This 207-nucleotide RNA was probed chemically with 2A3. It was measured as part of the RMDB library OK3TST. For 2A3 the reverse transcriptase was SuperScript II with manganese.

[RMDB]
RNA sequence: GGGAACGACUCGAGUAGAGUCGAAAACACCAUGUGGCUUUGGCUUCAGGCCCCAGCAGCCCUCCUGAGUCCUGCUGCCACGUGGCCUAGGAGACAGAUCUUAGCAUCUAUAGCCUUGGGUCCACCUGGCCGGCUGAGGCUGAGCUGUAGACAGCUGAGAUGACGAUAGGUUCGCCUAUCGUCAUCUAAAAGAAACAACAACAACAAC
Reactivity to 2A3 in 0.01 (KOAc 150mM, MgCl2 10mM, bicine 150mM(pH8.5), 24C), signal-to-noise 1, nucleotides 027 to 156: c070a060c040c060a110u170g100u090g050g000c070u020u110u050g120g000c000u150u190c160a070g050g020c010c010c010c010a040g060c070a060g020c050c000c000u020c050c110u160g040a020g140u060c050c030u090g050c010u000g000c000c000a020c010g000u000g000g000c000c000u000a000g000g010a020g000a000c070a020g000a070u040c070u240u300a060g000c050a090u000c000u000a140u060a130g000c030c000u020u100g060g000g020u060c060c000a000c000c050u000g060g000c020c020g080g050c050u020g120a020g040g000c050u000g010a080g020c000u000g000u070a000g080a120c140a040g060c040u020g040